This 177-nucleotide RNA was probed chemically with DMS and 2A3. For 2A3 the reverse transcriptase was SuperScript II with manganese. For DMS the reverse transcriptase was MarathonRT. It was measured as part of the RMDB library OK2TRN. The reactions ran in a buffer of 150 mM KOAc, 10 mM MgCl2 and 150 mM bicine (pH 8.5), at 24 C.

[RMDB]
RNA sequence: GGGAACGACUCGAGUAGAGUCGAAAAACAGGUCAGCGCUGUGGCAGCCACCGUUUCUGAGUUCUGUGCCCAGGACUCAGAGCGUGCCGAAGCGUUCAGCGUACACAGCAGCUCAGUCACCGCUGAGGGAGGGACACUUAUUCGUAAGUGUCCCUCCAAAAGAAACAACAACAACAAC
Reactivity to DMS in 0.01 (KOAc 150mM, MgCl2 10mM, bicine 150mM(pH8.5), 24C), signal-to-noise 1, nucleotides 027 to 126: a060c150a080g000g030u000c090a130g010c000g020c020u000g000u020g000g000c000a160g000c120c100a120c220c030g020u000u000u020c000u000g020a030g020u000u000c000u010g020u000g040c200c250c010a170g000g030a010c000u000c000a000g000a020g010c000g000u000g000c010c060g010a080a100g010c000g000u010u010c130a080g000c040g010u010a110c100a040c110a070g010c050a070g000c020u000c070a050g000u000c090a100c060c030g010c040u000g000a110g010
Reactivity to 2A3 in 0.01 (KOAc 150mM, MgCl2 10mM, bicine 150mM(pH8.5), 24C), signal-to-noise 1, nucleotides 027 to 126: a000c050a040g090g160u120c020a050g000c020g000c090u050g040u080g140g030c010a040g040c010c050a070c060c030g020u080u250u000c000u010g000a020g000u010u000c000u000g170u300g080c070c150c000a000g000g020a000c010u000c000a000g000a000g040c010g020u060g000c040c030g080a090a000g000c070g040u030u050c080a020g000c000g030u060a020c060a000c000a040g020c020a050g000c020u010c020a040g020u000c030a020c060c030g000c010u020g000a000g090